[RMDB]
RNA sequence: GGGAACGACUCGAGUAGAGUCGAAAAUUGCGCGUCGGGCAGGAUCGUCGAUUGCAUCAGCCCCGACGCCUCUGACAGAUAUGACGACCCGACCGGGUUGCCCGCCCGGUUGUUGGCGCGGGCGAUCCACAAUACGGAUGUUCGCAUCCGUAUUGUGAAAAGAAACAACAACAACAAC
Reactivity to DMS in 0.01 (KOAc 150mM, MgCl2 10mM, bicine 150mM(pH8.5), 24C), signal-to-noise 7, nucleotides 027 to 126: u020u000g000c170g000c000g000u010c000g000g010g040c100a190g000g010a030u000c060g020u030c170g000a150u030u030g020c100a110u000c050a190g000c190c010c010c000g010a010c010g010c010c000u020c030u010g000a080c140a090g000a130u020a060u000g010a080c080g000a130c010c000c000g000a110c160c120g000g000g000u000u000g000c010c000c010g010c000c010c010g010g000u000u000g000u000u000g000g000c200g000c010g010g000g010c010g000a030u010c000
Reactivity to 2A3 in 0.01 (KOAc 150mM, MgCl2 10mM, bicine 150mM(pH8.5), 24C), signal-to-noise 5, nucleotides 027 to 126: u080u110g030c070g000c000g020u000c000g020g000g010c060a070g150g080a050u040c040g160u050c090g160a230u080u300g020c050a020u020c020a030g060c060c010c010c000g010a000c000g000c000c000u030c000u030g070a030c030a080g090a120u170a080u270g050a050c070g050a030c020c000c000g020a040c030c010g020g010g000u010u030g040c000c010c000g000c010c000c010g060g000u020u010g000u010u040g000g040c080g000c000g010g010g000c010g000a010u000c000

Notes: Chemical mapping of a 177-nucleotide RNA with DMS and 2A3. The reactions ran in a buffer of 150 mM KOAc, 10 mM MgCl2 and 150 mM bicine (pH 8.5), at 24 C. For DMS the reverse transcriptase was MarathonRT. For 2A3 the reverse transcriptase was SuperScript II with manganese. In probing experiments dimethyl sulfate is read out at A N1 and C N3, which are open when not base-paired.